Structure probing data (2A3) for a 177-nucleotide construct. The reactions ran in a buffer of 150 mM KOAc, 10 mM MgCl2 and 150 mM bicine (pH 8.5), at 24 C. Reactivities are rounded to 0.1 and cut off at 0 and 3. It was measured as part of the RMDB library OK1LIB.
RNA sequence: GGGAACGACUCGAGUAGAGUCGAAAACAUAAGAUGGUCUAACUAAUACUGGAUAACCUAACUCAUUAGCAACUUCAAUACCUUCGUUAAGUGACCAUACACCCUUUCCUUUUGGUCUAUUUAUAUCGAUCCUCGCUGAGUUCGCUCAGCGAGGAUCAAAAGAAACAACAACAACAAC
Reactivity to 2A3 in 0.01 (KOAc 150mM, MgCl2 10mM, bicine 150mM(pH8.5), 24C), signal-to-noise 2, nucleotides 027 to 126: c070a010u180a090a180g050a040u020g030g050u020c010u020a000a060c020u040a160a090u150a110c150u070g000g040a030u070a220a100c040c010u040a080a220c030u100c130a040u110u000a020g000c000a020a000c100u090u040c020a060a120u030a120c000c050u040u050c010g040u070u130a130a000g030u040g050a000c000c000a000u010a020c040a070c000c000c000u000u040u050c000c000u140u090u010u070g030g000u000c030u080a130u150u220u070a120u000a040u100c020